[RMDB]
The record gives the reactivity of an RNA of 177 nucleotides to DMS.
Source: RMDB library OK2TRN, as collected in RNAgym.
DMS adducts were read by reverse transcription with MarathonRT.
The DMS profile rests on 1,031 reads.
RNA sequence: GGGAACGACUCGAGUAGAGUCGAAAAUGAUCCGGAUGGCACCUACAUCAAGCAGUACGUCCCGGAGUUGAUGAAUGUGCCCAAGGAAUUUGUUCACGAGCCCUGGCGAAUGUCUGCCGAGCAGCAGCUCGGGUCCAGCAUUCGUGCUGGACCCGAGAAAAGAAACAACAACAACAAC
Reactivity to DMS in 0.01 (KOAc 150mM, MgCl2 10mM, bicine 150mM(pH8.5), 24C), signal-to-noise 1, nucleotides 027 to 126: u040g030a100u010c020c020g050g000a290u030g030g020c010a020c000c110u020a140c000a000u000c020a020a080g040c080a110g000u020a070c070g020u020c040c010c030g010g030a160g010u010u000g020a020u000g010a130a100u000g000u000g000c000c000c060a220a180g000g000a060a060u000u000u000g010u000u000c020a090c070g020a170g030c030c010c020u000g040g010c010g000a060a020u010g010u010c010u000g020c040c040g000a060g000c040a070g000c120a090g000